[RMDB]
RNA sequence: GGGAACGACUCGAGUAGAGUCGAAAAAAAGAUAUGGAUGCACUACCCACCUCCAAGAUGAGAGCGAAGAACUAUUCUCGGAAACGAGAAUAGGGAGCUUUGAGGAGAGGUGCAUCCUAAGUCAAAAUCUUAUACUUCGGUUCGCCGAAGUAUAAGAAAAAGAAACAACAACAACAAC
Reactivity to DMS in 0.01 (KOAc 150mM, MgCl2 10mM, bicine 150mM(pH8.5), 24C), signal-to-noise 2, nucleotides 027 to 126: a070a090a070g040a090u010a140u050g010g010a010u000g020c010a000c010u010a090c130c030c050a300c120c000u040c000c020a050a150g030a270u020g030a110g020a030g000c050g000a110a160g000a180a210c010u000a010u000u000c000u000c010g030g000a110a060a090c000g020a020g010a000a010u010a030g040g000g000a070g000c000u000u000u000g000a190g010g010a070g000a090g000g000u000g010c000a000u000c000c010u000a000a020g000u000c100a050a110a130a150
Reactivity to 2A3 in 0.01 (KOAc 150mM, MgCl2 10mM, bicine 150mM(pH8.5), 24C), signal-to-noise 1, nucleotides 027 to 126: a040a040a050g100a030u180a040u150g000g000a000u000g000c000a020c010u210a220c000c000c040a060c000c000u070c010c010a010a040g230a170u300g060a020g030a060g150c080g220a300a020g020a020a030c000u000a000u020u000c000u000c020g050g000a030a030a040c000g010a010g000a020a000u000a000g000g000g020a000g030c000u030u080u080g010a000g060g010a020g010a000g040g000u010g020c000a010u000c020c000u010a010a010g050u010c080a040a000a000a300